Chemical mapping of a 177-nucleotide RNA with DMS and 2A3. Reactivities are rounded to 0.1 and cut off at 0 and 3. The reactions ran in a buffer of 150 mM KOAc, 10 mM MgCl2 and 150 mM bicine (pH 8.5), at 24 C. For DMS, 1,972 sequencing reads were counted.
RNA sequence: GGGAACGACUCGAGUAGAGUCGAAAAAUAACGUCAAAUCGUUAACGACAGAUGGUCAAAAAGUAAAUAAUAAAGACGGUAUUUAUCAAAUUGUUAAAAUUACGACAGAUCAAUCGAUGCCUCGAGACUCUAUUCCGGAAUUCGUUCCGGAAUAGAGAAAAGAAACAACAACAACAAC
Reactivity to DMS in 0.01 (KOAc 150mM, MgCl2 10mM, bicine 150mM(pH8.5), 24C), signal-to-noise 2, nucleotides 027 to 126: a140u000a040a050c000g010u010c260a140a130a130u040c010g000u000u010a060a190c090g020a070c040a100g040a000u000g000g000u000c020a000a060a090a110a120g000u020a000a050a020u010a070a010u010a070a050a060g030a130c110g000g000u000a140u040u000u020a030u010c040a040a060a050u000u000g010u000u000a060a110a060a000u010u000a000c000g000a010c230a000g000a070u000c030a030a100u000c020g000a090u010g010c060c000u000c010g000a040g010a260
Reactivity to 2A3 in 0.01 (KOAc 150mM, MgCl2 10mM, bicine 150mM(pH8.5), 24C), signal-to-noise 5, nucleotides 027 to 126: a000u040a020a000c010g000u010c140a030a050a150u180c040g050u030u040a050a030c020g040a000c020a060g130a080u120g010g000u020c030a090a110a070a090a030g010u030a040a100a090u200a050a020u090a040a150a030g040a060c050g000g040u050a090u050u090u030a140u160c080a080a130a120u070u050g020u070u040a100a100a080a130u100u040a010c030g020a020c040a090g050a030u030c010a130a030u020c050g070a050u070g060c020c000u000c010g050a050g040a000